Background:
An RNA of 177 nucleotides, treated with DMS and 2A3 and read out base by base. Source: RMDB library OK1LIB, as collected in RNAgym. For 2A3, 83,713 sequencing reads were counted. For DMS the reverse transcriptase was MarathonRT.
[RMDB]
RNA sequence: GGGAACGACUCGAGUAGAGUCGAAAAGGUGCGAAUCACUGUUUGGUCUAAUCCUAGACAGUCUGUGUUCUGUGAGGCAUUCUCAUAAUUGGAAGGCGCGCUAGGAUCAGGUACCUUGCGCCAGUUAAGUGUCUGGAGCAUUCGUGCUUCAGGCGCUAAAAGAAACAACAACAACAAC
Reactivity to DMS in 0.01 (KOAc 150mM, MgCl2 10mM, bicine 150mM(pH8.5), 24C), signal-to-noise 9, nucleotides 027 to 126: g010g020u000g010c030g010a110a080u020c110a070c060u010g000u010u010u010g000g010u010c070u010a070a060u010c050c010u000a020g010a060c050a100g000u010c040u010g010u020g010u010u010c040u000g010u000g000a070g000g010c170a100u020u010c010u000c040a050u020a070a120u020u030g010g010a080a060g000g010c020g000c080g010c070u010a010g000g000a080u010c100a050g000g010u010a030c020c010u000u000g000c050g010c010c010a030g010u020u020a060
Reactivity to 2A3 in 0.01 (KOAc 150mM, MgCl2 10mM, bicine 150mM(pH8.5), 24C), signal-to-noise 9, nucleotides 027 to 126: g020g000u010g000c010g030a050a030u100c020a010c040u020g020u040u040u050g010g000u000c020u070a020a030u020c000c010u010a020g010a030c010a010g000u000c020u050g110u010g030u050u010c010u020g020u020g030a020g020g030c040a080u180u010c020u000c010a070u070a160a090u100u070g090g040a080a030g050g000c040g000c010g010c080u030a000g000g010a040u050c030a030g070g040u070a040c000c000u000u020g000c010g000c000c000a000g040u030u100a050